[RMDB]
RNA sequence: GGGAACGACUCGAGUAGAGUCGAAAAGACUUGCUGACUAAACUAAAUGCCCAAAUCCACUUCGAAGGGUCAGGGGCUCAGGUUGUGGGACCAAGGGGACAGCCCCUGCAAGUGCUGACCCUAAACAUACUUGGAUACUCUUCGGAGUAUCCAAGUAAAAAGAAACAACAACAACAAC
Reactivity to 2A3 in 0.01 (KOAc 150mM, MgCl2 10mM, bicine 150mM(pH8.5), 24C), signal-to-noise 1, nucleotides 027 to 126: g040a000c010u000u040g020c030u040g080a150c030u130a040a140a030c030u020a040a080a150u160g010c020c010c030a050a060a030u040c050c010a050c100u180u110c140g120a160a090g000g000g010u000c020a060g000g000g050g000c040u020c070a040g060g000u110u060g050u170g130g030g030a050c050c080a020a080g000g000g020g010a080c050a040g220c000c000c000c000u000g040c010a010a010g000u040g090c010u000g000a000c040c000c000u010a040a040a000c060a020
Reactivity to DMS in 0.01 (KOAc 150mM, MgCl2 10mM, bicine 150mM(pH8.5), 24C), signal-to-noise 2, nucleotides 027 to 126: g030a070c030u000u000g010c020u000g020a180c100u000a070a100a110c120u000a030a100a060u000g000c010c000c020a070a080a120u000c040c030a090c120u000u020c160g000a170a090g020g000g020u010c050a060g000g000g000g000c030u000c180a140g000g000u010u000g000u010g000g000g000a040c080c090a060a060g010g000g000g000a140c200a050g010c000c030c000c050u000g000c010a050a020g000u000g010c040u000g020a100c010c010c000u000a070a100a080c210a150